[RMDB]
RNA sequence: GGGAACGACUCGAGUAGAGUCGAAAAGUGACUGGAGGACCAAUACAUCCUAGAGACGUAAAGUUGGCAAUAUUAUCCCACACUACCAGUUAUGACAAAGGAGUGUAUCACCUCAAUUUAGAUACUCAGAAGAUUACAAGUUCGCUUGUAAUCUUCUAAAAGAAACAACAACAACAAC
Reactivity to DMS in 0.01 (KOAc 150mM, MgCl2 10mM, bicine 150mM(pH8.5), 24C), signal-to-noise 5, nucleotides 027 to 126: g010u000g020a040c040u010g010g010a180g000g010a130c040c050a060a110u010a070c060a060u000c030c020u010a120g020a200g010a020c070g000u000a070a050a110g010u000u000g010g010c110a110a080u010a080u000u020a110u000c010c000c000a080c140a040c070u000a100c010c000a030g010u000u000a050u010g020a100c190a040a090a040g000g020a070g010u000g000u000a020u000c030a100c040c030u000c180a050a090u000u000u000a070g000a040u000a010c050u010c140
Reactivity to 2A3 in 0.01 (KOAc 150mM, MgCl2 10mM, bicine 150mM(pH8.5), 24C), signal-to-noise 4, nucleotides 027 to 126: g050u020g010a010c020u020g000g040a020g010g110a100c020c010a000a010u040a050c020a030u040c020c010u080a070g040a030g010a100c020g020u070a040a060a120g030u030u020g020g000c000a020a060u070a090u300u080a040u070c010c020c000a000c010a020c010u090a110c010c000a000g000u070u030a100u100g080a050c070a030a200a020g000g010a030g040u070g010u050a010u030c030a020c040c030u110c040a010a010u040u080u100a050g000a040u030a030c010u020c090
The record gives the reactivity of an RNA of 177 nucleotides to DMS and 2A3. The data come from the RNA Mapping Database (RMDB), library OK2TST. For 2A3, 3,781 sequencing reads were counted. The RNA was probed in 150 mM KOAc, 10 mM MgCl2 and 150 mM bicine (pH 8.5) at 24 C. For DMS, 4,472 sequencing reads were counted. For 2A3 the reverse transcriptase was SuperScript II with manganese.